[RMDB]
RNA sequence: GGGAACGACUCGAGUAGAGUCGAAAACAAGUUUUACUUCCUUCAAUGGAAUGAGAUCAACAAUCUGAGCAUACGUGUGUGUGCGUGUGCGUGUGUAUGUGUAUGUGUAUCUGUUUGUAUGUGAGUACUAAUGGAGUACGUUCGCGUACUCCAUUAGAAAAGAAACAACAACAACAAC
Reactivity to DMS in 0.01 (KOAc 150mM, MgCl2 10mM, bicine 150mM(pH8.5), 24C), signal-to-noise 5, nucleotides 027 to 126: c060a110a130g000u000u010u000u010a080c130u000u010c030c000u000u000c250a070a050u010g000g010a040a040u000g010a080g000a050u000c060a060a090c130a050a090u010c040u000g010a150g000c010a020u000a010c030g010u000g020u010g030u010g020u000g010c010g010u010g020u000g000c020g010u010g010u010g000u000a030u000g010u010g010u000a030u000g010u010g020u010a060u000c040u000g010u000u000u000g020u000a040u010g010u000g010a080g000u000a130
Reactivity to 2A3 in 0.01 (KOAc 150mM, MgCl2 10mM, bicine 150mM(pH8.5), 24C), signal-to-noise 3, nucleotides 027 to 126: c010a020a030g010u010u070u110u140a040c030u050u040c000c000u020u140c150a260a300u100g030g040a020a040u090g040a030g010a080u050c040a030a060c030a010a080u040c090u110g020a030g070c010a000u020a050c000g010u060g000u000g020u000g020u080g110c030g000u040g050u030g030c050g050u080g000u000g000u010a020u030g110u010g020u020a040u110g160u040g020u020a040u080c030u020g110u100u090u090g060u050a190u130g070u020g040a050g030u010a030